[RMDB]
Notes: This 177-nucleotide RNA was probed chemically with 2A3 and DMS. 2A3 adducts were read by reverse transcription with SuperScript II with manganese. Conditions: 150 mM KOAc, 10 mM MgCl2 and 150 mM bicine (pH 8.5), 24 C. The data come from the RNA Mapping Database (RMDB), library OK2TRN. For DMS the reverse transcriptase was MarathonRT.

RNA sequence: GGGAACGACUCGAGUAGAGUCGAAAAGACACGACGGAGACGUCGUGUCAAGUCCAGUGCGAAAGCACUGGACAAAUAAGGGCUGUUCUUCUCGCUGACUAUCAGCCCCAAACAAAAUAUGUCAGCACUAUCGAUUAUGGUUCGCCAUAAUCGAUAGAAAAGAAACAACAACAACAAC
Reactivity to 2A3 in 0.01 (KOAc 150mM, MgCl2 10mM, bicine 150mM(pH8.5), 24C), signal-to-noise 2, nucleotides 027 to 126: g000a000c000a010c000g000a000c010g020g010a060g030a050c000g010u000c000g000u020g000u000c000a000a000g000u000c000c000a000g000u000g010c000g080a130a010a030g000c000a000c010u000g000g010a000c000a000a010a000u110a040a060g000g000g000c010u000g010u020u010c020u050u020c060u040c100g010c000u010g010a010c000u010a010u030c000a000g010c010c000c010c060a010a050a000c010a000a010a010a010u050a030u120g010u020c010a000g010c010a020
Reactivity to DMS in 0.01 (KOAc 150mM, MgCl2 10mM, bicine 150mM(pH8.5), 24C), signal-to-noise 2, nucleotides 027 to 126: g020a010c000a000c010g020a000c010g010g010a280g000a270c000g010u000c000g010u000g020u000c010a010a070g000u000c010c000a010g000u000g020c000g000a150a130a150g000c000a010c000u000g000g010a000c000a020a050a080u000a100a130g010g000g020c000u000g010u000u000c050u000u000c060u000c180g000c000u000g010a020c000u010a030u010c000a030g000c000c000c010c180a010a010a190c070a000a010a010a010u000a010u020g000u000c000a000g000c000a300